[RMDB]
RNA sequence: GGGAACGACUCGAGUAGAGUCGAAAACGUCGUGAACUAGCGACAAUGCAUUAGGUCCAUCGUUAUCUAACCGAAACAUCGUGACUAGUGUUAGAAUAGAACCAGGAGAGGUCGCUGGCAAACAAAGACGGAGUGUAUUGUUCGCAGUACGCUCCGUAAAAGAAACAACAACAACAAC
Reactivity to DMS in 0.01 (KOAc 150mM, MgCl2 10mM, bicine 150mM(pH8.5), 24C), signal-to-noise 9, nucleotides 027 to 126: c070g010u050c120g000u010g000a240a210c030u010a030g010c010g010a010c010a060a070u040g010c060a110u010u020a070g010g000u010c050c050a110u020c150g010u010u020a090u010c010u010a020a040c070c040g000a110a090a090c090a120u030c160g000u030g010a090c060u010a060g010u020g000u000u010a030g000a050a090u020a090g000a060a060c030c030a080g010g010a090g000a130g000g000u000c010g010c010u000g000g000c050a030a150a030c060a070a090a080g010
Reactivity to 2A3 in 0.01 (KOAc 150mM, MgCl2 10mM, bicine 150mM(pH8.5), 24C), signal-to-noise 9, nucleotides 027 to 126: c040g070u050c020g020u030g050a070a030c020u010a020g000c000g010a000c000a020a070u120g020c030a040u040u070a060g030g080u020c040c020a050u040c070g030u030u060a140u080c020u020a020a070c040c030g030a040a030a030c050a080u150c110g100u120g070a040c030u030a050g010u010g010u080u030a030g020a070a050u100a060g050a030a030c030c010a030g010g060a090g020a030g010g060u000c000g000c000u000g000g000c020a040a040a020c010a020a090a000g090